[RMDB]
RNA sequence: GGGAACGACUCGAGUAGAGUCGAAAAUAUAUUCUAAUUGCCGUAUUGAGCACGGUUUGGAACCGAUUCCAAAGUCCAGGUGAAUUUAUUUGGUGGUAGAAGCCACUGUCGCAUUCUGCUGACCACAAUGAUACCGAGGAUUCGUCCUCGGUAUCAUAAAAGAAACAACAACAACAAC
Reactivity to 2A3 in 0.01 (KOAc 150mM, MgCl2 10mM, bicine 150mM(pH8.5), 24C), signal-to-noise 4, nucleotides 027 to 126: u260a010u030a020u000u060c030u040a050a130u160u160g010c000c000g050u050a120u070u290g090a050g020c080a030c030g060g000u080u020u050g060g000a000a000c070c030g060a070u100u030c020c000a020a040a000g020u000c020c020a010g000g030u100g070a100a100u040u170u060a100u080u110u250g030g000u000g010g000u010a010g020a060a040g010c030c010a120c090u180g090u160c070g050c050a130u020u050c000u020g010c010u030g090a020c010c010a020c040a010
Reactivity to DMS in 0.01 (KOAc 150mM, MgCl2 10mM, bicine 150mM(pH8.5), 24C), signal-to-noise 3, nucleotides 027 to 126: u010a120u070a150u000u000c030u000a040a090u030u020g000c000c020g000u010a100u020u030g030a210g020c040a060c030g000g030u000u010u010g000g000a040a150c100c130g040a170u030u000c050c070a020a070a130g020u010c040c040a060g010g010u000g010a080a040u040u010u020a060u030u030u020g000g010u000g000g000u020a020g000a050a120g000c010c060a110c140u000g000u050c080g000c030a140u020u010c030u000g010c020u000g010a040c020c020a080c250a060